[RMDB]
RNA sequence: GGGAACGACUCGAGUAGAGUCGAAAACCGUGGCUGCGUACCACGAAUACCUUAACUCAACCGACGUCGACGGCGACGACGGGCUGCGUCGCGUGGCUGGAGGAGGCGACACGCUUACCAGCACUGCGCACGAGGUUACGUUCGCGUGACCUCGUGCAAAAGAAACAACAACAACAAC
Reactivity to DMS in 0.01 (KOAc 150mM, MgCl2 10mM, bicine 150mM(pH8.5), 24C), signal-to-noise 2, nucleotides 027 to 126: c220c020g000u010g000g010c020u020g060c110g020u010a120c060c010a020c030g010a180a090u010a120c020c030u000u050a080a100c050u000c100a110a070c000c010g020a110c020g000u000c000g020a120c130g000g000c000g020a030c020g000a110c080g020g000g000c030u010g000c140g000u020c090g000c060g020u000g010g000c000u000g000g000a090g020g000a010g000g000c040g010a160c160a010c060g000c010u000u020a120c030c020a050g000c030a080c050u000g000c170
Reactivity to 2A3 in 0.01 (KOAc 150mM, MgCl2 10mM, bicine 150mM(pH8.5), 24C), signal-to-noise 7, nucleotides 027 to 126: c040c010g000u030g020g020c120u170g050c110g090u140a130c000c000a010c030g030a050a060u180a150c030c000u070u120a100a030c030u040c090a040a070c030c000g070a040c010g010u040c010g030a140c110g090g190c060g040a020c010g060a040c030g020g020g000c010u070g000c040g040u090c040g020c040g050u050g060g020c030u030g040g030a080g040g080a050g010g080c030g060a070c030a020c170g020c000u050u120a060c010c010a000g050c010a050c080u110g030c020
Background:
An RNA of 177 nucleotides, treated with DMS and 2A3 and read out base by base. The reactions ran in a buffer of 150 mM KOAc, 10 mM MgCl2 and 150 mM bicine (pH 8.5), at 24 C. 2A3 adducts were read by reverse transcription with SuperScript II with manganese. For DMS, 2,542 sequencing reads were counted. High 2A3 reactivity points to a flexible backbone, as in loops and unpaired stretches.